Structure probing data (DMS and 2A3) for a 177-nucleotide construct.
RNA sequence: GGGAACGACUCGAGUAGAGUCGAAAAGCGCAGCUUCGGCUGCGCGUUACGUUGAGCCACACGCACAAUACAUGUGGAUUCAGUUUUGUUCGUUCGGCUCGCGUUGGGACGUCGGCUUCGGCCGACGACUUGAGACUGACUUCGGUCAGUCUCAAGUAAAAGAAACAACAACAACAAC
Reactivity to DMS in 0.01 (KOAc 150mM, MgCl2 10mM, bicine 150mM(pH8.5), 24C), signal-to-noise 2, nucleotides 027 to 126: g000c000g030c010a000g000c000u010u000c190g030g010c000u000g010c000g020c000g010u010u000a040c030g030u010u010g030a010g000c000c000a080c140a020c010g020c100a020c000a010a020u000a000c030a090u000g050u000g020g020a110u010u000c020a030g020u000u010u000u000g010u010u000c010g020u000u000c230g030g000c000u000c010g010c030g040u000u000g010g010g010a240c010g010u000c000g010g000c000u000u010c180g010g010c000c000g000a000c000g000
Reactivity to 2A3 in 0.01 (KOAc 150mM, MgCl2 10mM, bicine 150mM(pH8.5), 24C), signal-to-noise 1, nucleotides 027 to 126: g000c000g020c030a000g010c000u050u100c200g140g010c000u010g000c000g000c000g000u010u080a010c010g010u030u300g020a000g000c020c000a040c000a000c060g020c010a010c010a030a020u050a050c120a270u040g030u100g300g090a160u130u120c020a000g020u040u000u020u030g000u020u020c010g000u010u010c080g020g030c000u000c000g020c020g000u050u060g090g060g040a020c000g000u000c000g000g000c010u010u050c160g120g000c010c000g000a000c010g010
DMS adducts were read by reverse transcription with MarathonRT.